[RMDB]
RNA sequence: GGGAACGACUCGAGUAGAGUCGAAAAGACGGGAUCCCCCUGUCGGUGCAGCGGCGUUUUCCGGAACUGGAAAACCGACAUGUUGAUUUCCUGAAACGGGAUAUCAUCAAAGCCAUGAACAAAGCAGCAUCCUCGCGUAUUUCGAUACGCGAGGAUGAAAAGAAACAACAACAACAAC
Reactivity to DMS in 0.01 (KOAc 150mM, MgCl2 10mM, bicine 150mM(pH8.5), 24C), signal-to-noise 1, nucleotides 027 to 126: g010a100c090g010g000g000a120u010c030c000c010c000c040u000g000u010c040g000g030u000g000c060a130g040c060g000g010c140g010u000u000u000u000c010c000g040g000a100a200c240u010g010g000a050a040a000a050c020c080g040a040c020a060u020g040u000u000g000a030u000u000u000c010c010u000g010a070a190a120c160g000g000g000a010u000a010u000c000a060u000c000a060a120a120g010c000c010a070u000g010a080a090c160a060a080a170g000c190a060g000